This 177-nucleotide RNA was probed chemically with DMS and 2A3. Values cover nucleotides 27 to 126. Conditions: 150 mM KOAc, 10 mM MgCl2 and 150 mM bicine (pH 8.5), 24 C. For 2A3, 27,164 sequencing reads were counted.

[RMDB]
RNA sequence: GGGAACGACUCGAGUAGAGUCGAAAAGAUAUGGACGCAUCGACAUGAUCGAGACACUCGGAAACGAGUGACGAGAUCAACAGCGAGUGCGUCCUAAGUCAAACGUAGGGAGUUCGCUCCCUACGAACUCUAAAUAUUACUUCGGUAAUAUUUAGAGAAAAGAAACAACAACAACAAC
Reactivity to DMS in 0.01 (KOAc 150mM, MgCl2 10mM, bicine 150mM(pH8.5), 24C), signal-to-noise 9, nucleotides 027 to 126: g000a050u010a300u010g000g010a010c010g020c000a060u000c010g010a070c090a260u010g010a010u000c000g000a300g000a090c000a000c000u000c000g010g000a110a110a210c000g010a010g020u000g010a040c010g000a300g000a010u000c000a020a050c290a100g000c010g010a030g020u000g020c000g000u000c000c000u000a000a070g000u000c040a090a100a240c020g020u000a000g010g000g000a010g020u010u010c260g020c000u000c000c000c000u000a000c000g000a020a070
Reactivity to 2A3 in 0.01 (KOAc 150mM, MgCl2 10mM, bicine 150mM(pH8.5), 24C), signal-to-noise 6, nucleotides 027 to 126: g030a030u100a070u210g000g000a000c000g000c010a010u030c020g130a160c070a130u130g000a010u010c000g010a010g010a030c000a000c010u000c000g030g040a080a090a040c010g000a000g010u000g000a010c010g000a010g000a000u010c000a010a010c020a010g090c010g020a110g210u130g000c010g000u010c000c000u000a010a000g010u000c030a060a010a090c020g000u000a000g000g010g000a010g020u060u120c240g090c100u000c000c000c000u000a000c000g000a010a000